[RMDB]
RNA sequence: GGGAACGACUCGAGUAGAGUCGAAAACGGAUUCUGUCUCCUUCGGCUCUCCAGAGUCGGAGCUCUCCAGGGAGCGCUUUGUUGUUCGAUGCCGGCUGGUUGGAAAAGGACGGGCCCUUGGGGGCGGCGUGUCAUCAAUCUUCGGAUUGAUGACACGAAAAGAAACAACAACAACAAC
Reactivity to DMS in 0.01 (KOAc 150mM, MgCl2 10mM, bicine 150mM(pH8.5), 24C), signal-to-noise 1, nucleotides 027 to 126: c180g010g000a030u000u020c090u050g020u010c050u000c180c030u000u000c100g030g010c010u000c000u020c030c090a220g000a000g020u000c020g000g000a100g000c010u000c000u040c010c100a080g000g000g020a090g000c030g000c060u040u040u020g010u000u000g030u020u020c050g020a070u000g020c040c000g000g010c020u000g000g030u000u020g010g000a130a110a050a170g000g030a030c040g000g010g010c020c000c000u020u000g040g000g000g000g000c000g050g000
Reactivity to 2A3 in 0.01 (KOAc 150mM, MgCl2 10mM, bicine 150mM(pH8.5), 24C), signal-to-noise 1, nucleotides 027 to 126: c060g050g000a070u230u120c060u210g160u040c030u000c020c000u020u000c000g000g000c000u000c000u020c030c050a080g000a000g030u010c000g000g000a000g000c020u000c000u000c020c010a060g080g010g000a080g010c030g000c110u090u050u110g040u020u040g010u000u010c000g030a050u030g060c060c010g020g050c040u080g060g000u060u040g100g030a120a060a030a010g000g010a010c010g010g040g000c030c000c000u020u060g020g000g020g020g000c000g000g010